This 177-nucleotide RNA was probed chemically with 2A3 and DMS. For DMS the reverse transcriptase was MarathonRT. Source: RMDB library OK2TST, as collected in RNAgym. The RNA was probed in 150 mM KOAc, 10 mM MgCl2 and 150 mM bicine (pH 8.5) at 24 C.

RNA sequence: GGGAACGACUCGAGUAGAGUCGAAAACUUUUUGGUCGUAGUACCGUGCUGCUUUCAUAGCAGUUCUCCUUCAAUCGGACUGUUGCAUACUAUUGCAUGCGUGAUUAAACACGAAAUUACCACCAGAUCCUCCAGUUGAGUUCGCUCAACUGGAGGAAAAAGAAACAACAACAACAAC
Reactivity to 2A3 in 0.01 (KOAc 150mM, MgCl2 10mM, bicine 150mM(pH8.5), 24C), signal-to-noise 1, nucleotides 027 to 126: c030u130u060u060u100u060g030g030u090c020g080u010a100g000u040a070c040c010g000u000g010c010u000g000c000u050u170u230c100a100u110a040g010c000a020g000u040u010c040u050c000c000u140u040c070a100a130u080c030g000g030a030c010u040g050u060u030g000c020a010u040a190c010u190a200u250u040g000c000a020u060g000c000g040u030g010a040u170u160a130a150a000c010a000c020g020a230a050a020u080u060a010c010c030a030c000c000a050g000a100
Reactivity to DMS in 0.01 (KOAc 150mM, MgCl2 10mM, bicine 150mM(pH8.5), 24C), signal-to-noise 1, nucleotides 027 to 126: c090u000u000u000u000u000g010g000u000c270g000u010a010g050u000a130c150c040g000u000g010c000u010g000c130u010u010u010c210a060u020a050g000c000a050g010u010u000c090u000c120c160u000u030c230a080a120u010c180g000g000a060c020u010g000u000u000g000c030a040u000a150c160u010a110u010u010g020c010a010u000g000c010g010u050g020a000u000u000a110a060a210c040a020c010g000a020a050a110u000u000a050c010c070a020c010c050a090g020a130